Record summary: The record gives the reactivity of an RNA of 177 nucleotides to 2A3. Source: RMDB library OK1LIB, as collected in RNAgym. The reactions ran in a buffer of 150 mM KOAc, 10 mM MgCl2 and 150 mM bicine (pH 8.5), at 24 C.
RNA sequence: GGGAACGACUCGAGUAGAGUCGAAAAUAACAAAACAAAACCGUCCAAGCCGCGGACGUUAAACUGUGGCACGGUUGUGCCUAGGUGCAACCCUGCUACUAAUGGCGGUACCGCUGCCCCAAAACAAGCGACAGUAGCAGUUCGCUGCUACUGUCGCAAAAGAAACAACAACAACAAC
Reactivity to 2A3 in 0.01 (KOAc 150mM, MgCl2 10mM, bicine 150mM(pH8.5), 24C), signal-to-noise 2, nucleotides 027 to 126: u190a060a130c150a070a160a090a000c060a040a030a050a100c110c020g050u050c020c020a050a030g030c000c000g000c000g000g000a000c000g000u000u000a150a160a010c150u030g000u000g060g000c010a000c010g000g030u000u000g010u000g010c010c060u140a250g130g000u110g000c000a000a020c000c000c000u000g040c000u000a000c100u170a100a110u100g020g000c000g000g000u060a150c030c100g000c010u010g010c000c000c010c030a020a170a010a000c050a130a000